[RMDB]
RNA sequence: GGGAACGACUCGAGUAGAGUCGAAAACCGCACUGGGUUUGGUCGCCCAGGGGAUGGAGACACGGAAAGGACAUCGUGUGCUAUAAGUCUGACGUAAGUCGAGCUUGCAACAUGGGUCUAUGCCUGGAAAAGAUUUACCGUUCGCGGUAAAUCUUUUAAAAGAAACAACAACAACAAC
Reactivity to 2A3 in 0.01 (KOAc 150mM, MgCl2 10mM, bicine 150mM(pH8.5), 24C), signal-to-noise 4, nucleotides 027 to 126: c000c000g000c000a020c040u030g030g000g020u040u070u060g130g030u070c040g000c000c000c040a030g020g000g020g010a020u120g040g040a060g080a030c050a010c080g010g020a040a100a080g050g020a020c000a160u150c060g010u020g010u020g000c010u020a030u030a200a020g010u020c010u030g030a000c040g090u140a160a020g020u010c020g010a010g010c010u020u030g000c000a020a020c000a160u060g000g030g000u000c010u060a050u190g040c000c000u050g070g040
Reactivity to DMS in 0.01 (KOAc 150mM, MgCl2 10mM, bicine 150mM(pH8.5), 24C), signal-to-noise 4, nucleotides 027 to 126: c020c010g010c160a160c030u000g020g000g000u000u000u010g020g000u040c200g010c000c020c000a010g000g000g020g000a060u010g000g000a110g010a090c080a070c090g010g000a060a090a240g010g010a020c020a040u000c030g020u000g010u000g030c010u020a050u020a040a020g020u020c010u000g010a010c000g000u050a150a130g000u000c000g000a030g000c010u040u000g000c050a090a050c010a020u000g000g000g010u010c010u000a090u020g000c030c010u000g010g000
Description: Chemical mapping of a 177-nucleotide RNA with 2A3 and DMS. It was measured as part of the RMDB libraries RFM100 and RFMREP. Conditions: 150 mM KOAc, 10 mM MgCl2 and 150 mM bicine (pH 8.5), 24 C. DMS adducts were read by reverse transcription with MarathonRT.